[RMDB]
RNA sequence: GGGAACGACUCGAGUAGAGUCGAAAAAGCACUGGUACGAUACGUCGUACCAGUGCAGUCGUUGGGAUGGAACGCAAUUAAAUACAUGUGUGACGUGUAUUUGCGAACGACGUAUUUAUUUUUCAAAAUCACGCUAUCGUGUUCGCACGAUAGCGAAGUCUAGAUUAGGCUUCGGCCUAAUCUAGACAAAAGAAACAACAACAACAAC
Reactivity to 2A3 in 0.01 (KOAc 150mM, MgCl2 10mM, bicine 150mM(pH8.5), 24C), signal-to-noise 1, nucleotides 027 to 156: a010g010c000a020c000u000g000g000u010a020c060g000a010u020a040c250g070u000c010g000u000a000c000c000a000g000u010g000c000a000g010u000c000g010u060u040g100g140g080a250u110g170g050a080a030c020g010c030a000a020u170u130a030a140a040u050a020c050a000u150g020u050g120u210g230a070c020g000u000g070u010a130u010u020u020g000c020g020a020a000c000g080a000c060g020u000a030u000u300u010a080u050u120u030u040u110c080a180a150a000a070u220c070a050c020g000c000u000a000u000c000g000u030g010u070u020c020g000c050a000c000g000a000u010a000g080c020g000a010a000